This 177-nucleotide RNA was probed chemically with 2A3 and DMS. For 2A3 the reverse transcriptase was SuperScript II with manganese. It was measured as part of the RMDB library OK2TST. The 2A3 profile rests on 1,560 reads. Conditions: 150 mM KOAc, 10 mM MgCl2 and 150 mM bicine (pH 8.5), 24 C. High 2A3 reactivity points to a flexible backbone, as in loops and unpaired stretches.
RNA sequence: GGGAACGACUCGAGUAGAGUCGAAAACACGAAAUCCGUUCCGGUACUGCACAUGUGGUAGUGUGGCCGACUGACUUGCCGCAAGCCGGCGUCGAUGACCGGCGUCACUGGCACACCCCGUGCUGGGACUCUCCCCCUCAUUCGUGAGGGGGAGAGUAAAAGAAACAACAACAACAAC
Reactivity to 2A3 in 0.01 (KOAc 150mM, MgCl2 10mM, bicine 150mM(pH8.5), 24C), signal-to-noise 2, nucleotides 027 to 126: c080a010c040g110a010a040a050u120c060c010g020u050u010c020c020g030g000u060a030c030u080g040c050a060c000a150u090g030u090g110g300u130a020g000u040g040u070g250g010c000c010g040a060c040u070g000a000c020u060u190g020c000c020g000c130a090a060g110c100c010g000g000c000g040u040c050g070a170u200g060a100c140c010g000g000c000g000u000c000a010c010u050g080g000c000a010c000a010c000c000c000c010g000u010g040c010u030g000g020g060
Reactivity to DMS in 0.01 (KOAc 150mM, MgCl2 10mM, bicine 150mM(pH8.5), 24C), signal-to-noise 2, nucleotides 027 to 126: c080a110c110g000a000a160a070u000c100c040g010u010u000c000c000g010g010u000a080c050u000g090c050a050c100a180u000g020u000g000g000u010a010g010u000g010u000g010g010c090c000g010a170c050u000g020a160c060u010u000g010c010c000g040c040a150a070g040c200c000g020g000c030g010u000c070g000a120u000g000a100c180c020g010g000c010g030u010c050a020c010u030g000g000c000a060c050a110c090c150c030c090g040u000g010c020u000g040g000g000